Annotation: This 177-nucleotide RNA was probed chemically with 2A3. Reactivities are given for positions 27 through 126.
[RMDB]
RNA sequence: GGGAACGACUCGAGUAGAGUCGAAAACAACGUCAAGGCGCGUGCAUUGGGUUACGGUGGAUAUGGUUUGUACUCGAUGGGGACGCUGACGCUGGUGGGCGGCAGCUCGCUGUACACGCGGUACUGCGUCCCAGCCUCCCUUCGGGGAGGCUGGGACAAAAGAAACAACAACAACAAC
Reactivity to 2A3 in 0.01 (KOAc 150mM, MgCl2 10mM, bicine 150mM(pH8.5), 24C), signal-to-noise 1, nucleotides 027 to 126: c000a010a020c000g100u020c080a000a010g090g090c000g000c000g000u030g000c000a040u000u060g000g000g070u130u110a100c120g160g070u300g230g090a200u170a120u170g100g130u060u190u110g040u070a030c000u000c000g030a010u060g010g020g000g000a000c010g000c000u000g030a010c050g050c020u090g020g240u020g080g000g040c040g000g000c000a040g000c000u070c070g000c050u040g060u090a000c040a000c060g090c030g000g040u010a080c040u020g000c040